Chemical mapping of a 177-nucleotide RNA with DMS and 2A3. The reactions ran in a buffer of 150 mM KOAc, 10 mM MgCl2 and 150 mM bicine (pH 8.5), at 24 C. For DMS, 805 sequencing reads were counted.

RNA sequence: GGGAACGACUCGAGUAGAGUCGAAAAAUGGCCUCGAAGAAACCGCUGCAGGAUGACUCGCUGGACCCCAACGCGAACAGGAUCUAUGCGGCGCUCAAGUCGAUGGGGUACAUGGUCAAGCAAGUGAAAAUCGCACCACUUUCGAGUGGUGCGAUUUAAAAGAAACAACAACAACAAC
Reactivity to DMS in 0.01 (KOAc 150mM, MgCl2 10mM, bicine 150mM(pH8.5), 24C), signal-to-noise 1, nucleotides 027 to 126: a070u000g010g030c010c000u000c020g080a270a300g000a000a000a060c300c010g000c000u000g000c010a240g000g000a130u000g000a000c000u000c010g070c010u030g000g000a300c020c030c000c000a070a240c240g000c000g000a010a140c210a010g000g000a030u000c050u010a050u000g000c020g000g000c000g030c010u030c050a120a210g030u000c010g000a170u000g000g050g000g010u000a000c000a150u000g000g000u000c200a120a110g020c070a130a010g050u030g010a140
Reactivity to 2A3 in 0.01 (KOAc 150mM, MgCl2 10mM, bicine 150mM(pH8.5), 24C), signal-to-noise 1, nucleotides 027 to 126: a000u100g030g020c070c000u010c030g120a300a160g010a000a060a000c000c000g000c030u060g000c010a000g020g000a140u020g030a120c020u010c000g010c000u080g080g080a240c020c050c000c020a030a060c020g000c040g080a100a000c000a220g020g100a020u000c020u020a220u100g000c020g000g030c050g000c030u000c040a000a000g120u050c000g040a020u040g000g000g000g000u000a000c000a040u050g000g010u050c180a000a010g000c030a010a020g080u030g150a240

For 2A3 the reverse transcriptase was SuperScript II with manganese.